[RMDB]
RNA sequence: GGGAACGACUCGAGUAGAGUCGAAAAUAUGGAUGACAGUAGCGAAGGCUCACUUUUUUCGAGCUUUAGCGGAUCGGACAACUCUAUUACUAGUAUGGACAGUUGGUCGUCAGGACCUAGUUCACUACAAGUAUAUGGACUUCGGUCCAUAUACUUGAAAAGAAACAACAACAACAAC
Reactivity to DMS in 0.01 (KOAc 150mM, MgCl2 10mM, bicine 150mM(pH8.5), 24C), signal-to-noise 8, nucleotides 027 to 126: u000a090u000g000g010a190u000g010a110c060a090g020u000a150g030c010g010a100a100g000g020c010u000c010a150c250u010u010u010u010u010u010c190g010a020g000c010u010u000u000a170g010c010g000g000a060u000c060g010g000a200c070a040a080c080u000c040u000a040u000u000a120c130u000a070g010u000a070u010g000g000a040c060a090g010u000u000g000g010u000c020g010u010c220a110g010g000a040c020c010u010a100g000u000u000c020a030c090u000a070
Reactivity to 2A3 in 0.01 (KOAc 150mM, MgCl2 10mM, bicine 150mM(pH8.5), 24C), signal-to-noise 6, nucleotides 027 to 126: u190a050u040g030g020a000u020g000a010c020a070g100u160a020g040c020g000a060a000g030g010c000u000c010a040c030u140u130u060u050u220u300c090g000a000g000c010u030u000u010a010g000c020g000g030a020u040c010g000g020a000c010a040a070c040u000c010u080a060u130u040a100c060u020a030g110u080a090u080g020g000a010c020a090g140u170u030g060g000u000c030g080u120c140a070g300g010a000c000c020u020a030g010u010u010c020a010c030u080a020